RNA sequence: GGGAACGACUCGAGUAGAGUCGAAAAACCUACUUCGGUAGGUAAUAUUCCUAAGUCUUGCUCCACUUGGGAGGACGAUAAGUAUCGGAAACGAUACUUUUGACGUCCUUUGAUCAAGUGUGAGCAAGAUAUGGACGGUGGCCGAAUUCGUUCGGAACUAGAGUAUCUUGUUCGCAAGAUACUCUAGAAAAGAAACAACAACAACAAC
Reactivity to 2A3 in 0.01 (KOAc 150mM, MgCl2 10mM, bicine 150mM(pH8.5), 24C), signal-to-noise 5, nucleotides 027 to 156: a000c010c000u010a000c020u030u060c240g110g010u020a020g000g010u020a060a070u160a040u080u050c010c000u020a150a040g040u000c000u000u010g010c000u000c000c000a010c010u000u000g020g020g000a010g010g000a000c000g020a010u020a050a010g000u000a000u000c010g030g030a110a040a060c000g000a010u010a000c000u020u030u020u040g110a050c010g000u010c000c020u100u090u080g110a120u100c000a000a000g000u010g030u060g010a000g000c010a000a000g000a000u000a010u010g050g020a030c100g170g110u120g110g020c010c010g020a050a070u150u110c230g080u080u010c000g060g010a030a040
Reactivity to DMS in 0.01 (KOAc 150mM, MgCl2 10mM, bicine 150mM(pH8.5), 24C), signal-to-noise 3, nucleotides 027 to 156: a050c000c000u010a000c010u000u010c280g050g020u000a010g020g010u000a030a040u000a140u000u000c000c000u000a120a200g000u000c010u010u000g020c000u010c000c000a020c020u000u000g000g000g010a010g040g010a020c010g020a150u000a020a030g010u000a010u000c020g010g020a230a140a270c000g030a010u000a010c000u000u000u000u010g030a260c090g020u000c000c010u020u010u030g000a150u000c000a000a030g020u010g020u000g040a020g010c000a000a000g000a010u000a040u010g020g000a070c150g010g030u010g030g000c000c020g000a050a110u000u000c200g000u000u000c010g010g020a180a250
This 207-nucleotide RNA was probed chemically with 2A3 and DMS. 2A3 adducts were read by reverse transcription with SuperScript II with manganese.